[RMDB]
RNA sequence: GGGAACGACUCGAGUAGAGUCGAAAAGCGAAUUUGGAUAGCAGAUUGAGGUGUCACGGUCUCUGUUAUUUAGAUUCGGAUCGCAGGUAGUAUUAGAUUGUGAUACCUCAAGUACUAUCAGCGAUUAGUAACAGGUUGUAUUCGUACAAUCUGUUACAAAAGAAACAACAACAACAAC
Reactivity to 2A3 in 0.01 (KOAc 150mM, MgCl2 10mM, bicine 150mM(pH8.5), 24C), signal-to-noise 9, nucleotides 027 to 126: g050c020g030a040a060u090u060u130g070g000a000u000a000g010c040a030g040a200u030u040g010a000g010g020u020g020u040c010a010c020g020g020u000c040u000c010u020g020u010u000a020u000u040u050a110g050a150u090u090c060g010g010a000u000c000g000c000a010g000g030u080a020g020u030a120u140u060a020g020a020u010u020g010u020g020a020u020a020c000c000u000c000a010a000g000u020a010c000u000a000u010c040a000g060c040g070a070u060u200a060
Reactivity to DMS in 0.01 (KOAc 150mM, MgCl2 10mM, bicine 150mM(pH8.5), 24C), signal-to-noise 7, nucleotides 027 to 126: g020c050g010a060a080u010u020u040g020g020a010u000a000g020c100a050g020a200u010u010g000a020g000g000u000g020u000c020a010c020g000g000u000c010u000c090u000g000u000u000a010u000u000u010a150g000a080u020u020c180g000g010a040u000c010g000c110a050g010g010u000a040g020u010a060u010u020a040g000a010u000u000g010u010g010a040u000a020c020c020u000c000a010a010g010u000a090c000u000a000u010c010a140g000c070g010a060u020u010a090